[RMDB]
RNA sequence: GGGAACGACUCGAGUAGAGUCGAAAACGCCCUGACGUUCUUCUGCUACAACGUGGGUCCAGUCUGUACAACCAGCACAGCGUUCAAGCGCUUCAACCAAGGCCGCGCCACUGAGGGCUGCCAAGCCCAUGGCCCAACCAUUCGUGGUUGGGCCAUGAAAAGAAACAACAACAACAAC
Reactivity to 2A3 in 0.01 (KOAc 150mM, MgCl2 10mM, bicine 150mM(pH8.5), 24C), signal-to-noise 1, nucleotides 027 to 126: c040g000c000c000c010u000g110a030c060g020u020u030c000u120u000c020u080g040c010u060a050c040a120a020c030g060u050g030g030g000u000c000c000a010g020u000c010u050g030u050a070c030a080a080c070c000a020g010c060a020c050a030g000c060g060u120u100c130a150a070g020c030g020c010u130u090c020a070a120c060c020a040a030g070g000c000c000g030c010g010c000c000a040c020u060g040a100g000g070g000c030u050g020c010c010a010a000g000c000c000
Reactivity to DMS in 0.01 (KOAc 150mM, MgCl2 10mM, bicine 150mM(pH8.5), 24C), signal-to-noise 4, nucleotides 027 to 126: c200g010c020c010c010u010g000a150c100g020u000u000c050u000u000c100u010g000c090u010a080c100a050a080c130g020u000g020g000g000u010c040c060a080g010u000c030u020g020u010a060c180a070a110c080c040a060g000c060a050c070a070g020c080g030u010u010c180a090a090g000c050g000c010u000u000c090a030a130c080c070a050a080g010g000c040c040g010c100g010c020c050a050c090u000g020a060g000g010g010c020u000g000c080c140a110a090g000c030c020

Conditions: 150 mM KOAc, 10 mM MgCl2 and 150 mM bicine (pH 8.5), 24 C. The record gives the reactivity of an RNA of 177 nucleotides to 2A3 and DMS. For DMS the reverse transcriptase was MarathonRT.